[RMDB]
Chemical mapping of a 177-nucleotide RNA with DMS and 2A3. For DMS the reverse transcriptase was MarathonRT. 2A3 adducts were read by reverse transcription with SuperScript II with manganese. Conditions: 150 mM KOAc, 10 mM MgCl2 and 150 mM bicine (pH 8.5), 24 C.
RNA sequence: GGGAACGACUCGAGUAGAGUCGAAAAUGUUAAAAGUUUCAUCCAUUUGUACUGUUAAGAACUGGCUUGGUUGAUAGUUUAAUCAGAUAACGACAUAUGGUAUGCCAGGUGUAACUCAUGUUGACAUUAUAAUCGACUCUUUCGAGAGUCGAUUAUAAAAAGAAACAACAACAACAAC
Reactivity to DMS in 0.01 (KOAc 150mM, MgCl2 10mM, bicine 150mM(pH8.5), 24C), signal-to-noise 2, nucleotides 027 to 126: u000g010u000u000a010a100a110a120g000u030u000u000c020a060u010c000c040a030u010u000u000g020u020a050c030u000g050u000u010a050a190g000a080a040c040u000g030g010c020u010u000g010g010u010u010g010a090u030a050g000u010u020u000a090a080u040c050a050g030a150u010a050a070c250g010a050c090a030u000a010u000g000g030u030a030u040g020c070c040a070g000g030u020g010u010a020a060c120u020c180a040u020g000u020u000g020a050c080a090u000
Reactivity to 2A3 in 0.01 (KOAc 150mM, MgCl2 10mM, bicine 150mM(pH8.5), 24C), signal-to-noise 2, nucleotides 027 to 126: u080g030u100u050a000a150a000a040g020u000u000u000c100a050u070c000c020a010u000u030u000g100u090a070c100u010g110u300u040a230a140g000a060a060c000u000g000g040c010u030u160g050g080u150u060g090a130u070a300g040u030u000u240a080a010u040c040a000g000a080u120a080a000c000g030a000c040a000u030a040u010g080g000u050a020u070g040c000c000a020g020g050u000g020u000a000a010c000u080c000a090u030g000u050u030g000a030c000a080u000